[RMDB]
RNA sequence: GGGAACGACUCGAGUAGAGUCGAAAAGUGUGAAGUGAGUGAGCCACUUACGAGCACGAAUUACAUGGCUCUAUUGACAUUACUGGGCGCCAGGAGCCCUACCUGGACAAGUCUCGAAGAUCGGGCCGCGAUUGAGAGACGACUAUUAACGGCCACAAUGAUUUAAUUAGUUCGCUAAUUAAAUCAUAAAAGAAACAACAACAACAAC
Reactivity to DMS in 0.01 (KOAc 150mM, MgCl2 10mM, bicine 150mM(pH8.5), 24C), signal-to-noise 4, nucleotides 027 to 156: g020u000g020u000g020a160a200g000u000g010a070g050u000g010a190g010c070c040a180c020u000u000a060c050g010a300g010c020a090c040g010a100a150u000u000a100c120a080u000g020g010c000u000c020u020a140u000u010g010a090c050a060u010u000a140c100u000g010g020g020c020g030c040c030a070g000g010a120g010c020c020c010u000a030c030c010u010g000g000a090c100a070a170g000u000c000u000c030g010a190a130g000a060u000c050g010g000g040c040c020g020c020g000a060u000u000g010a300g000a100g020a070c000g010a080c050u010a120u000u010a080a070c030g020g020c000c000a060c100a090
Reactivity to 2A3 in 0.01 (KOAc 150mM, MgCl2 10mM, bicine 150mM(pH8.5), 24C), signal-to-noise 6, nucleotides 027 to 156: g020u030g000u020g070a060a040g010u010g020a020g010u040g030a050g070c050c030a030c010u020u020a020c020g020a020g000c010a000c040g030a030a050u160u100a080c100a160u130g020g000c000u000c010u050a120u050u140g070a060c070a100u040u180a110c070u100g020g060g000c050g010c000c010a020g010g010a060g020c000c000c020u020a020c010c000u010g040g000a030c030a050a060g000u000c000u000c010g050a080a010g000a030u020c020g010g070g080c050c020g080c040g020a020u050u090g010a030g000a000g000a050c000g010a000c010u020a020u190u080a090a040c030g000g000c020c010a030c030a050